[RMDB]
RNA sequence: GGGAACGACUCGAGUAGAGUCGAAAAGCUUGCAUAGAAUUGGAUGUGGCAUGUGAGUGGAUAUUCAGAUGUAUUCAUGGCUGUGUGCCUGGUGGUCCCUGCCACUUGGGGGUUGUCUAAAUGCAUGAUUUGUUAAAGGCAAUACAUCCUUUUGUGAAUUCAAUACCCAUUUCGAUGGGUAUUGAAUAAAAGAAACAACAACAACAAC
Reactivity to DMS in 0.01 (KOAc 150mM, MgCl2 10mM, bicine 150mM(pH8.5), 24C), signal-to-noise 3, nucleotides 027 to 156: g010c030u000u010g020c030a130u000a110g020a090a110u010u000g010g010a070u010g020u010g010g010c020a040u000g030u000g010a140g030u000g020g000a050u000a030u010u000c050a230g010a110u010g050u010a050u000u000c030a060u000g010g000c000u020g040u000g010u000g010c020c010u000g020g030u000g010g010u000c040c030c040u010g020c030c020a040c050u000u000g020g020g020g020g020u000u000g010u010c020u000a040a070a130u000g000c050a070u000g010a170u000u010u020g040u000u000a040a110a090g010g010c040a050a070u000a060c050a090u000c030c010u000u000u000u000g010u000g010a100
Reactivity to 2A3 in 0.01 (KOAc 150mM, MgCl2 10mM, bicine 150mM(pH8.5), 24C), signal-to-noise 5, nucleotides 027 to 156: g040c030u070u110g030c060a090u070a100g070a120a090u080u110g020g020a050u050g030u040g020g060c030a020u070g030u030g080a060g010u040g020g040a020u030a070u100u170c080a070g060a150u130g040u090a040u050u100c050a040u050g060g000c020u020g010u030g010u040g140c010c010u000g010g020u020g010g000u050c030c000c010u020g030c020c010a040c000u030u030g010g010g000g000g000u020u020g020u000c010u030a070a160a060u100g010c020a020u080g040a190u180u100u100g040u030u100a090a060a000g030g000c020a000a020u040a070c020a030u080c000c010u040u100u080u090g110u050g060a050